[RMDB]
RNA sequence: GGGAACGACUCGAGUAGAGUCGAAAAUUCUUUCAGUGUUAGUGAUUUUUCUGUUAGCUCUUUGAUGUCAGAGGCAAAGGCAUCACUUUUUCUGUCCUGAAUAACCACAACGCCAGCGAUUACAUCCGAGACCAAUAGAAUUCGUUCUAUUGGUCUCAAAAGAAACAACAACAACAAC
Reactivity to DMS in 0.01 (KOAc 150mM, MgCl2 10mM, bicine 150mM(pH8.5), 24C), signal-to-noise 4, nucleotides 027 to 126: u000u000c020u000u020u000c060a070g020u000g020u010u000a070g020u000g000a050u000u000u010u010u010c040u010g000u000u010a110g010c040u010c030u000u000u000g010a100u000g010u010c060a040g010a090g000g010c080a060a070a080g010g020c150a030u000c030a040c100u000u000u000u000u000c050u000g000u000c040c030u010g010a050a070u000a070a090c020c020a030c080a060a040c110g020c020c030a040g010c050g020a080u000u000a060c130a130u010c120c130
Reactivity to 2A3 in 0.01 (KOAc 150mM, MgCl2 10mM, bicine 150mM(pH8.5), 24C), signal-to-noise 3, nucleotides 027 to 126: u020u000c000u020u080u070c020a020g000u020g020u100u120a060g020u030g070a070u000u050u040u050u070c030u080g070u080u080a040g010c010u010c030u160u060u060g040a060u070g060u100c030a030g050a070g120g040c030a020a030a030g030g000c010a000u040c010a030c000u060u130u010u050u010c050u030g030u030c000c040u020g040a070a030u030a090a070c030c020a020c000a030a030c040g020c030c010a020g000c030g040a040u060u090a040c030a080u050c030c070